Record summary:
This 177-nucleotide RNA was probed chemically with DMS and 2A3. Reactivities are given for positions 27 through 126. Conditions: 150 mM KOAc, 10 mM MgCl2 and 150 mM bicine (pH 8.5), 24 C. The DMS profile rests on 2,968 reads.
RNA sequence: GGGAACGACUCGAGUAGAGUCGAAAAUGCUGCUCGCUACUGCCAUGGGAUUGGGGCUAGUGGUCUUUAUCUUGAGCAGUGUGGGGAUAGCCAUAGGAGAGCUGGUGUUACGUGGCCCCACAAUUAGUGAUCUGUGUUGAUUCGUCAACACAGAUCAAAAAGAAACAACAACAACAAC
Reactivity to DMS in 0.01 (KOAc 150mM, MgCl2 10mM, bicine 150mM(pH8.5), 24C), signal-to-noise 3, nucleotides 027 to 126: u000g010c000u010g010c000u000c030g010c070u000a040c040u000g010c010c040a050u010g030g000g030a110u010u000g000g030g000g010c050u000a070g020u000g030g030u000c070u000u010u000a050u010c060u000u010g010a100g010c030a020g000u010g030u020g000g020g000g000a150u000a160g010c020c030a060u010a110g000g020a100g000a100g010c050u010g000g020u000g010u010u010a070c190g020u000g030g000c010c000c010c030a050c150a090a050u010u000a120g020
Reactivity to 2A3 in 0.01 (KOAc 150mM, MgCl2 10mM, bicine 150mM(pH8.5), 24C), signal-to-noise 1, nucleotides 027 to 126: u040g040c000u010g000c010u060c090g000c050u070a040c030u020g050c000c040a140u250g090g000g150a060u140u100g080g000g030g000c040u060a010g080u040g120g000u060c000u000u110u050a130u000c040u080u100g020a010g000c000a000g010u010g000u000g070g010g010g000a040u120a020g070c000c020a080u100a080g130g070a120g020a010g000c040u060g090g060u110g040u180u200a080c030g000u020g080g040c000c000c000c010a020c000a000a070u160u130a050g110